[RMDB]
RNA sequence: GGGAACGACUCGAGUAGAGUCGAAAACAGGAGAGGCCGCCCGUCCGCGCAACUGGGGCCCGCGCCAAAAAGGCCCCUCAGCGCGCCCAGGACACGCAGCCGUCUGACGCCACCAGCGCCCCUGGGGUCAAAAACCCCUAUUCGUAGGGGUUUUUGAAAAAGAAACAACAACAACAAC
Reactivity to DMS in 0.01 (KOAc 150mM, MgCl2 10mM, bicine 150mM(pH8.5), 24C), signal-to-noise 1, nucleotides 027 to 126: c040a020g020g010a140g050a180g010g000c040c060g010c010c120c050g010u010c020c050g060c000g030c020a090a090c170u000g030g040g030g020c010c040c060g020c150g000c180c120a060a090a090a160a150g000g020c010c030c010c040u000c030a240g020c060g000c020g000c050c140c040a130g070g010a050c030a090c110g010c060a050g010c020c020g000u020c000u000g000a110c030g000c050c000a140c050c030a130g020c090g020c030c000c010c060u000g010g000g000g000